[RMDB]
RNA sequence: GGGAACGACUCGAGUAGAGUCGAAAAACACGAUUUUAAAUGUCGAUGAUAUCAGGCAUAUCUCUAUUGGCCCUAACAUCAUUCAUGUAAAAACACCGUUUGCAGACGGAACGAAUAGAAUUUAUGUGAGUUCCAAAGAAAUUGAACAGUUAGAAAACACUAUACUUGGAUUCGUCCAAGUAUAGUGAAAAGAAACAACAACAACAAC
Reactivity to 2A3 in 0.01 (KOAc 150mM, MgCl2 10mM, bicine 150mM(pH8.5), 24C), signal-to-noise 6, nucleotides 027 to 156: a000c080a020c040g030a040u020u060u140u260a100a210a120u120g010u030c050g020a050u080g060a040u070a040u190c050a050g040g000c030a040u050a110u080c080u000c030u120a150u100u110g060g000c010c000c010u030a050a030c020a050u080c010a010u070u050c020a020u090g050u200a030a060a020a060a040c020a030c030c020g020u010u030u160g070c060a040g030a040c010g020g000a050a020c030g000a010a030u090a130g070a060a060u070u110u070a060u110g040u020g000a020g030u050u000c020c000a000a050a010g030a020a090a040u110u090g010a050a010c020a040g040u050u060a060g050a020a060a010a000
Reactivity to DMS in 0.01 (KOAc 150mM, MgCl2 10mM, bicine 150mM(pH8.5), 24C), signal-to-noise 3, nucleotides 027 to 156: a110c060a060c060g010a180u000u000u010u000a040a110a100u000g010u000c030g010a100u000g010a100u000a080u000c050a030g020g020c050a090u000a080u000c060u000c100u000a150u000u020g020g020c130c030c020u010a050a080c050a020u000c020a050u000u000c020a060u000g020u010a040a010a030a050a070c020a110c040c050g000u000u000u000g020c130a120g010a120c220g000g010a080a070c050g000a080a100u000a090g020a140a170u000u000u000a030u020g010u000g010a140g020u000u010c030c010a060a060a120g030a050a090a120u000u000g010a070a070c070a100g010u010u000a090g010a120a090a070a150